[RMDB]
RNA sequence: GGGAACGACUCGAGUAGAGUCGAAAAGGCGGGGCCGGACGCUACUGAGCAGAUCGGUGCGGGGCCCAUCCCGUUUGACAGCGAUGCCACCUAGAUCGGUGACGGCCGGCGGUCGGGCCCGGCGAGCGCGUUGUAAGGAAUUCGUUCCUUACAACGCAAAAGAAACAACAACAACAAC
Reactivity to 2A3 in 0.01 (KOAc 150mM, MgCl2 10mM, bicine 150mM(pH8.5), 24C), signal-to-noise 3, nucleotides 027 to 126: g090g000c040g000g010g010g060c020c000g040g010a010c000g010c020u110a050c020u050g010a020g020c060a040g050a290u040c020g030g020u050g030c010g000g030g030g020c030c020c010a010u040c010c010c010g010u080u060u140g110a060c040a020g040c050g070a080u130g030c010c000a020c000c020u080a130g030a210u110c060g000g030u040g040a090c010g050g010c070c060g050g050c010g000g000u010c040g020g040g000c000c060c000g030g060c020g010a050g000c070
Reactivity to DMS in 0.01 (KOAc 150mM, MgCl2 10mM, bicine 150mM(pH8.5), 24C), signal-to-noise 3, nucleotides 027 to 126: g030g000c050g020g010g000g040c020c000g010g010a120c010g010c020u000a060c040u000g010a300g020c170a130g000a080u000c010g020g020u000g010c010g010g000g010g000c060c050c050a070u010c050c000c020g020u000u000u010g020a080c090a110g010c060g010a110u010g010c030c010a050c020c020u000a130g010a100u000c080g000g000u010g010a080c100g010g000c030c060g010g010c040g000g000u010c060g010g020g000c030c010c010g010g000c050g000a130g000c160

An RNA of 177 nucleotides, treated with 2A3 and DMS and read out base by base. DMS adducts were read by reverse transcription with MarathonRT. The DMS profile rests on 3,770 reads. It was measured as part of the RMDB library OK2TST. Values cover nucleotides 27 to 126. For 2A3 the reverse transcriptase was SuperScript II with manganese.